Chemical mapping of a 207-nucleotide RNA with DMS.
The RNA was probed in 150 mM KOAc, 10 mM MgCl2 and 150 mM bicine (pH 8.5) at 24 C.
Reactivities are given for positions 27 through 156.
RNA sequence: GGGAACGACUCGAGUAGAGUCGAAAAGUUAUGGCCCUCCAAGGUGGUCCUGCUCCUUCAUACCUCCCCACCUCCCUCAUUUACUGCAUCAGCCAGAUGUCCCACUUCUUGGAGCAGGGUUUAAGUUGCACUUGGCCUAAGUGGUGGUAGGACACAGAAAACAACCUAUCUUCGGAUAGGUUGUUUUAAAAGAAACAACAACAACAAC
Reactivity to DMS in 0.01 (KOAc 150mM, MgCl2 10mM, bicine 150mM(pH8.5), 24C), signal-to-noise 3, nucleotides 027 to 156: g010u010u010a090u000g010g020c010c010c010u000c030c020a100a110g040g030u000g020g010u010c010c010u000g000c030u000c010c010u030u000c080a120u010a150c040c030u000c020c030c000c010a090c060c030u010c010c020c030u010c060a110u010u000u010a120c070u000g030c090a090u010c070a120g020c030c060a120g010a090u000g000u000c000c020c010a130c110u000u010c070u010u000g010g000a040g050c020a060g020g010g020u000u000u000a080a170g010u000u000g000c020a150c070u000u000g010g040c010c020u000a070a090g030u010g010g020u000g030g000u000a060g010g000a110c010a060c060a170g020